[RMDB]
RNA sequence: GGGAACGACUCGAGUAGAGUCGAAAAGAUAUGGAGCCUGAACUACGCUACUCAGUUCAAUGAUGGAAUCAUUUAUCGGAAACGAUAAAUGAUUCUUGAGAACGAAGGAGCGCAGGCUCCUAAGUCAGUAUAUAUAUCAGUUCGCUGAUAUAUAUACAAAAGAAACAACAACAACAAC
Reactivity to 2A3 in 0.01 (KOAc 150mM, MgCl2 10mM, bicine 150mM(pH8.5), 24C), signal-to-noise 6, nucleotides 027 to 126: g020a010u040a020u120g000g000a000g030c050c000u010g020a070a060c130u180a040c300g000c010u050a070c020u070c160a050g030u010u020c070a120a170u300g270a060u300g180g000a000a000u000c000a000u010u000u000a000u000c010g000g000a010a030a020c000g000a000u000a000a000a000u000g000a000u000u000c000u000u010g010a000g000a010a000c020g040a080a020g030g010a000g010c010g000c010a000g010g000c000u000c000c000u000a010a000g000u000c010a000
Reactivity to DMS in 0.01 (KOAc 150mM, MgCl2 10mM, bicine 150mM(pH8.5), 24C), signal-to-noise 9, nucleotides 027 to 126: g000a030u000a100u010g000g000a010g020c010c000u000g000a090a040c120u020a300c020g010c000u000a040c000u010c140a300g020u000u000c000a050a060u010g010a060u010g000g000a010a000u000c000a000u000u000u000a000u000c000g000g000a030a020a080c000g020a000u000a000a010a010u000g000a000u000u000c000u000u000g000a300g000a010a010c010g000a300a070g000g000a040g010c010g000c010a000g000g010c000u000c000c000u000a000a040g000u000c010a120
About this RNA
This 177-nucleotide RNA was probed chemically with 2A3 and DMS. As a SHAPE reagent, 2A3 marks flexible, mostly unpaired nucleotides at the ribose 2'-OH.